RNA sequence: GGGAACGACUCGAGUAGAGUCGAAAAAAAAUGCUCUGAGUACAGGAAGAGCUUUAGUGAGAACUUGUACCUCAUUCAACAUCAGGAAAUUCACAGGCGAGAGAAGCCAUGUGCACCUACAACAUGAAGUCAGCAUAGUAUUCGUACUAUGCUGACUAAAAGAAACAACAACAACAAC
Reactivity to 2A3 in 0.01 (KOAc 150mM, MgCl2 10mM, bicine 150mM(pH8.5), 24C), signal-to-noise 1, nucleotides 027 to 126: a000a000a000a000u070g000c020u010c020u020g030a020g120u060a070c020a020g110g030a030a040g030a000g040c000u040u040u000a050g050u010g050a050g000a040a060c040u040u040g020u080a020c000c010u020c010a020u110u030c010a090a100c000a080u120c070a020g070g030a050a190a100u110u050c000a010c030a040g030g000c010g000a090g010a000g020a300a000g020c000c030a030u020g000u000g030c060a050c060c010u060a040c010a090a000c030a080u100g110a090
Reactivity to DMS in 0.01 (KOAc 150mM, MgCl2 10mM, bicine 150mM(pH8.5), 24C), signal-to-noise 3, nucleotides 027 to 126: a000a120a050a060u000g000c030u000c040u000g010a110g020u000a030c070a080g020g020a120a030g000a110g000c020u000u010u000a080g000u000g000a140g010a070a120c050u010u000g020u000a050c120c070u000c020a030u010u000c110a080a060c100a060u000c070a100g020g010a030a070a080u010u000c030a000c050a050g000g010c000g000a160g020a140g000a090a110g010c010c010a060u000g010u010g020c300a130c020c010u000a050c080a020a060c070a070u000g020a110